An RNA of 177 nucleotides, treated with DMS and 2A3 and read out base by base. Conditions: 150 mM KOAc, 10 mM MgCl2 and 150 mM bicine (pH 8.5), 24 C. For 2A3, 2,318 sequencing reads were counted. Values are in units of 0.01, from 0 to 300, in steps of 10. 2A3 adducts were read by reverse transcription with SuperScript II with manganese.
RNA sequence: GGGAACGACUCGAGUAGAGUCGAAAAGAUAUGGAUACUGUGGAUGGCGAAGAACUCGGAAACGAGGGAGCCACCAUUGGUAUCCUAAGUCAAAAUCACGUAAUCGAGUUCGCUCGAUUACGUGAAAUCUACCAUGGAACUUCGGUUCCAUGGUAGAAAAAGAAACAACAACAACAAC
Reactivity to DMS in 0.01 (KOAc 150mM, MgCl2 10mM, bicine 150mM(pH8.5), 24C), signal-to-noise 2, nucleotides 027 to 126: g020a030u000a300u010g000g000a010u000a000c000u010g050u000g000g010a080u000g030g000c000g040a170a160g030a150a190c020u000c010g010g010a130a120a270c020g000a030g000g000g000a050g010c000c000a000c000c010a020u000u000g020g000u010a000u000c000c000u010a000a150g000u030c060a120a080a070a120u000c000a010c000g000u000a000a010u000c000g000a030g010u010u000c300g020c000u000c010g010a020u000u000a010c010g030u000g010a000a050a030
Reactivity to 2A3 in 0.01 (KOAc 150mM, MgCl2 10mM, bicine 150mM(pH8.5), 24C), signal-to-noise 2, nucleotides 027 to 126: g000a000u060a020u200g000g000a020u010a010c020u020g000u030g020g140a300u020g040g000c030g100a300a020g010a070a060c010u000c010g010g030a120a050a010c010g000a010g010g040g020a000g000c010c030a000c000c010a000u110u280g030g000u000a010u000c000c000u000a120a010g030u000c030a060a030a010a260u040c000a010c000g010u000a000a000u020c000g000a020g060u140u100c220g140c140u020c000g020a000u000u010a000c000g000u010g000a000a000a000